[RMDB]
Chemical mapping of a 177-nucleotide RNA with 2A3. Conditions: 150 mM KOAc, 10 mM MgCl2 and 150 mM bicine (pH 8.5), 24 C. Values cover nucleotides 27 to 126. It was measured as part of the RMDB library OK1LIB.
RNA sequence: GGGAACGACUCGAGUAGAGUCGAAAAGGAAUAGAAACAUAUCUACCACUCACACAGAGCACACACCAACUAUUAAUUUAGAAGAGUGUGGCAAGAGAAUGGCACUCUUAGAAAUCUUAUUCCAUUCCACGCGGAUAACCUUCGGGUUAUCCGCGUGAAAAGAAACAACAACAACAAC
Reactivity to 2A3 in 0.01 (KOAc 150mM, MgCl2 10mM, bicine 150mM(pH8.5), 24C), signal-to-noise 1, nucleotides 027 to 126: g000g000a060a000u090a040g100a000a270a000c050a100u190a020u000c000u050a060c000c000a000c020u020c000a150c000a030c090a050g000a000g170c000a020c000a000c030a000c180c000a050a020c050u020a030u010u030a080a140u300u090u060a090g050a210a000g020a000g020u060g000u050g030g060c000a090a040g060a000g000a090a140u100g000g000c060a000c050u110c000u060u000a030g190a010a010a010u000c000u000u250a030u100u050c000c000a010u090u000c020